[RMDB]
RNA sequence: GGGAACGACUCGAGUAGAGUCGAAAAACCCAUUUCGAUGGGUCGGAAGACCUUUGUGAGAUUGUCAGAUCCAUUCAUCGAAACGCCCCAUUGGGGUGGAACCGAUGGUGGAUCUUGGAUUUAUCUCACUCUGGUUCUAAUGAGCAUUCGUGCUCAAAUCAACUGUGUGAUUCGUCACACAGUUGAUAAAAGAAACAACAACAACAAC
Reactivity to 2A3 in 0.01 (KOAc 150mM, MgCl2 10mM, bicine 150mM(pH8.5), 24C), signal-to-noise 4, nucleotides 027 to 156: a000c000c000c020a000u080u120u060c070g120a040u050g020g040g040u060c070g110g150a100a030g010a010c000c040u000u010u020g000u000g000a010g000a010u010u010g000u000c000a000g010a000u000c000c000a020u120u300c000a000u010c010g030a070a060a050c010g020c010c010c000c070a300u230u300g000g000g000g010u020g000g010a110a050c070c000g000a000u000g000g010u000g020g000a000u000c000u000u020g000g000a000u120u210u100a020u030c010u000c000a010c000u000c000u010g000g040u120u000c030u070a150a170u120g010a010g010c010a010u050u170c290g120u070g000c010u000c000a100a090
Reactivity to DMS in 0.01 (KOAc 150mM, MgCl2 10mM, bicine 150mM(pH8.5), 24C), signal-to-noise 2, nucleotides 027 to 156: a050c000c000c000a080u000u000u000c150g010a030u010g020g010g000u000c020g010g010a180a120g000a030c000c000u000u020u010g030u000g020a010g000a040u000u020g000u000c020a080g010a020u000c000c000a030u010u000c010a020u000c020g030a090a100a300c000g040c020c000c020c030a300u000u010g030g000g010g000u000g010g010a020a170c160c040g000a030u000g020g060u010g010g000a000u000c000u000u000g010g020a080u000u000u000a010u000c000u000c010a020c000u000c040u010g030g070u000u000c040u010a080a170u010g010a000g060c000a160u010u010c300g040u010g000c010u010c000a030a070